Overview: Conditions: 150 mM KOAc, 10 mM MgCl2 and 150 mM bicine (pH 8.5), 24 C. An RNA of 177 nucleotides, treated with DMS and read out base by base. DMS adducts were read by reverse transcription with MarathonRT.
RNA sequence: GGGAACGACUCGAGUAGAGUCGAAAAAAGAUAUGGAUCAGGUGGAGGCUGGAUAAGGUCGUUGAAACCUCCUCGGAAACGAGGAGGUGGAGACCGUAACAGCCGAUGAAACCUGAUCCUAAGUCAACCACUCAUAUAGGUUCGCCUAUAUGAGUGGAAAAGAAACAACAACAACAAC
Reactivity to DMS in 0.01 (KOAc 150mM, MgCl2 10mM, bicine 150mM(pH8.5), 24C), signal-to-noise 4, nucleotides 027 to 126: a100a080g000a030u010a300u010g020g010a000u010c000a000g000g010u000g000g010a020g010g010c000u000g010g010a160u010a140a090g000g010u000c000g020u010u010g000a210a180a040c000c000u000c000c000u000c000g010g000a080a060a180c010g020a010g000g010a000g000g000u000g000g000a100g000a020c000c000g010u010a070a220c010a010g020c000c000g000a040u000g000a080a150a020c010c000u000g000a000u000c000c000u000a000a060g010u000c010a160a210